[RMDB]
RNA sequence: GGGAACGACUCGAGUAGAGUCGAAAAUGAAAAGGUAGCCAAAGAUAGUGAGGGAACUGAUGAAUUCACUGUGGCUAAAUCCAGCUAAGGAGGACUCAGCUUCUACAUCUAGGUAUCAACAACCAUCCCAUAGUGCGUCAUUCGUGACGCACUAUGGAAAAGAAACAACAACAACAAC
Reactivity to 2A3 in 0.01 (KOAc 150mM, MgCl2 10mM, bicine 150mM(pH8.5), 24C), signal-to-noise 7, nucleotides 027 to 126: u160g020a030a010a010a070g090g010u060a040g160c020c020a050a090a020g090a050u190a080g080u090g090a090g020g050g050a050a050c030u030g020a030u050g020a050a060u040u020c030a040c150u040g060u170g130g000c060u080a100a010a030u140c080c030a010g000c020u030a070a040g050g010a020g010g020a030c020u020c020a020g010c040u030u000c030u060a050c010a020u010c010u010a020g010g010u040a030u100c030a010a050c000a010a020c040c020a030u070c000
Reactivity to DMS in 0.01 (KOAc 150mM, MgCl2 10mM, bicine 150mM(pH8.5), 24C), signal-to-noise 3, nucleotides 027 to 126: u030g010a090a030a040a090g020g020u000a050g020c000c010a030a120a150g000a070u010a040g040u010g000a080g000g020g010a080a150c050u020g000a040u050g030a220a110u030u000c040a060c070u000g020u030g010g010c030u000a010a080a100u040c110c070a040g000c090u020a150a070g000g000a020g000g020a300c180u000c060a020g000c030u000u020c030u000a010c010a020u010c020u000a120g000g030u020a040u020c080a080a110c150a070a200c030c040a150u000c160